Source information:
The record gives the reactivity of an RNA of 177 nucleotides to DMS. DMS adducts were read by reverse transcription with MarathonRT. Conditions: 150 mM KOAc, 10 mM MgCl2 and 150 mM bicine (pH 8.5), 24 C. Values cover nucleotides 27 to 126. It was measured as part of the RMDB library OK2TRN.

RNA sequence: GGGAACGACUCGAGUAGAGUCGAAAACAGCGGCGCAGUUAGAGUCCAUGCUAUUGGACCAACUGUGAGUUGGGCCUUGAUGACCCAUUUUUGGGACUGAGAGCAACCAGGCCUUGGCUGCCAUCAGAAACGGUCAGAUCUUCGGAUCUGACCGUUUAAAAGAAACAACAACAACAAC
Reactivity to DMS in 0.01 (KOAc 150mM, MgCl2 10mM, bicine 150mM(pH8.5), 24C), signal-to-noise 1, nucleotides 027 to 126: c090a070g000c030g000g000c030g000c010a000g020u010u000a120g000a130g000u010c000c000a020u030g010c300u000a070u000u000g000g000a020c010c010a000a040c000u010g020u000g010a150g030u010u000g000g020g030c060c010u000u010g000a160u000g020a060c050c000c010a010u010u000u000u000u050g020g000g000a200c020u020g000a070g020a300g030c060a020a050c070c000a050g000g000c060c040u000u000g000g000c000u000g000c010c160a070u010c100a110g020